The record gives the reactivity of an RNA of 177 nucleotides to 2A3 and DMS.
2A3 adducts were read by reverse transcription with SuperScript II with manganese.
It was measured as part of the RMDB library OK2TST.

RNA sequence: GGGAACGACUCGAGUAGAGUCGAAAAUUGGCACGUAUACAUGGACUACCAUGUUGUCAUUGGCUACGGCCAAGGUCAUUGCUAAAUGGUUGGCUGUGAAUGUCUUGUACUUCACAGACGUACCGCAUGCUCGUGUCAAUUUCGAUUGACACGAGCAAAAAGAAACAACAACAACAAC
Reactivity to 2A3 in 0.01 (KOAc 150mM, MgCl2 10mM, bicine 150mM(pH8.5), 24C), signal-to-noise 3, nucleotides 027 to 126: u030u000g010g000c040a010c120g060u080a040u010a100c000a010u000g030g020a060c050u170a230c090c000a010u010g000u000u020g030u000c020a040u050u000g000g000c010u010a080c200g100g000c020c030a000a000g030g020u070c030a050u020u110g040c020u080a090a060a030u110g010g000u030u020g050g000c000u000g030u010g020a050a030u240g010u030c040u080u210g030u120a000c010u020u000c000a000c010a020g010a000c020g050u050a010c000c000g020c030a030
Reactivity to DMS in 0.01 (KOAc 150mM, MgCl2 10mM, bicine 150mM(pH8.5), 24C), signal-to-noise 4, nucleotides 027 to 126: u000u000g010g020c000a020c250g020u000a070u020a020c020a000u000g000g010a280c280u010a150c030c030a030u000g000u000u000g010u010c020a080u010u000g000g010c010u000a110c160g040g010c010c010a000a000g000g010u010c050a130u010u000g010c050u000a050a050a090u000g000g010u000u000g000g010c000u000g000u010g000a010a010u000g010u000c020u010u000g020u010a020c000u000u000c000a000c000a000g010a020c010g010u010a020c010c000g010c240a180
For DMS, 4,417 sequencing reads were counted.
Values cover nucleotides 27 to 126.